[RMDB]
RNA sequence: GGGAACGACUCGAGUAGAGUCGAAAAUGAUGUAAUGGUACUGGUAAGAACUGCAACAGGCACGACUCAGUAUAUCCGCAUAGCGGCUAUCAGCAGUGUAGUUAGGGAGUUUUCUGAUUCACAAGGGGUAUUUACACGCAGAAUCGUUAAUGUCGAGUAUGAUUCUUAGCUUCGGCUAAGAAUCAUAAAAAGAAACAACAACAACAAC
Reactivity to 2A3 in 0.01 (KOAc 150mM, MgCl2 10mM, bicine 150mM(pH8.5), 24C), signal-to-noise 2, nucleotides 027 to 156: u100g070a000u050g020u180a050a060u100g040g000u040a040c040u060g040g020u040a060a050g000a090a020c010u020g000c060a070a030c030a130g130g000c020a020c060g070a030c020u010c020a000g060u060a030u030a000u110c060c000g000c160a120u120a130g010c000g020g010c020u040a050u090c020a000g020c020a040g020u040g030u120a080g050u000u100a030g010g030g000a040g010u040u000u020u050c080u060g090a120u120u020c060a010c060a110a050g000g010g000g010u030a060u010u190u040a030c080a000c070g000c000a000g060a020a050u050c020g020u030u130a040a000u130g070u110c030g050a030g040
Reactivity to DMS in 0.01 (KOAc 150mM, MgCl2 10mM, bicine 150mM(pH8.5), 24C), signal-to-noise 2, nucleotides 027 to 156: u000g000a090u000g030u000a070a040u000g010g020u000a030c030u000g010g000u000a050a090g000a060a060c080u000g040c020a080a030c100a170g010g010c040a000c020g020a150c060u000c040a150g040u000a090u000a070u000c000c020g000c000a210u000a160g020c040g050g040c100u000a020u000c060a140g000c110a110g040u010g010u010a050g030u000u010a080g020g010g010a050g000u000u000u000u040c030u000g010a130u030u000c030a010c100a070a130g000g010g020g050u010a030u000u010u000a050c120a090c100g070c100a100g000a070a050u000c050g010u000u000a090a060u010g010u010c030g010a150g020
Annotation: Structure probing data (2A3 and DMS) for a 207-nucleotide construct. 2A3 is a SHAPE reagent: it acylates the 2'-hydroxyl of flexible nucleotides of all four kinds. Source: RMDB library OK3TST, as collected in RNAgym. The DMS profile rests on 2,735 reads. Conditions: 150 mM KOAc, 10 mM MgCl2 and 150 mM bicine (pH 8.5), 24 C.